[RMDB]
RNA sequence: GGGAACGACUCGAGUAGAGUCGAAAAAGCCGAGGACUACGGUCCUCGGCAACAACCGUCACAACGGCUUCCUGGCGUGACGGGGUUAACCCCAACGGAGCAAGUGCGAGCUUACGAUCUCGCACAAUUUAGGAGAAUUCCUUCGGGAAUUCUCCAACCAAUGAUCAACGUUCGCGUUGAUCAUUGGAAAAGAAACAACAACAACAAC
Reactivity to 2A3 in 0.01 (KOAc 150mM, MgCl2 10mM, bicine 150mM(pH8.5), 24C), signal-to-noise 2, nucleotides 027 to 156: a000g000c000c000g010a000g000g000a010c040u080a010c300g090g000u030c000c010u000c000g000g000c000a000a000c000a000a000c010c000g000u010c000a000c000a000a050c080g130g000c040u240u140c040c000u060g050g000c000g020u000g000a000c000g010g010g000g000u110u190a050a030c060c000c000c000a020a100c060g010g010a000g000c040a170a050g060u000g000c000g000a020g000c050u180u110a120c170g020a070u030c000u010c000g000c000a010c000a000a010u010u060u180a050g000g000a010g000a000a000u000u000c000c040u040u060c280g040g000g000a000a000u000u000c000u000c000c000a000a010